[RMDB]
RNA sequence: GGGAACGACUCGAGUAGAGUCGAAAAGUAUUGACCCUAAGCUUCAGGACUUGUAUGUAGGGAAUCUAUUUGACAUUUCUAUUUCAAAAGCUUUCACACGAGAGAAUGAAUCAUUCACACUUAAUUCAUACAAGUUGAUAUUCGUAUCAACUUGUAUAAAAGAAACAACAACAACAAC
Reactivity to 2A3 in 0.01 (KOAc 150mM, MgCl2 10mM, bicine 150mM(pH8.5), 24C), signal-to-noise 7, nucleotides 027 to 126: g060u040a120u170u240g100a130c000c000c010u030a080a020g020c020u050u050c030a020g020g040a060c010u050u040g030u080a090u100g060u060a080g020g010g080a050a050u040c020u060a270u060u050u060g030a010c020a020u150u200u010c060u190a130u020u090u030c050a060a070a010a020g000c000u020u040u050c070a080c020a010c060g030a030g010a000g030a080a030u040g020a030a040u060c020a060u120u110c040a050c000a020c100u070u210a080a060u300u140c050
Reactivity to DMS in 0.01 (KOAc 150mM, MgCl2 10mM, bicine 150mM(pH8.5), 24C), signal-to-noise 9, nucleotides 027 to 126: g010u000a110u000u000g020a190c060c010c020u010a110a140g010c100u000u000c050a060g010g010a210c040u000u000g010u010a050u010g020u010a050g020g000g000a080a060u010c030u000a090u010u000u000g010a050c100a050u010u010u010c110u000a080u010u000u000c060a040a050a060a100g010c070u000u000u000c040a060c090a070c110g000a050g000a050g010a190a080u000g000a060a050u010c040a060u010u000c070a080c160a070c090u000u000a070a110u010u010c080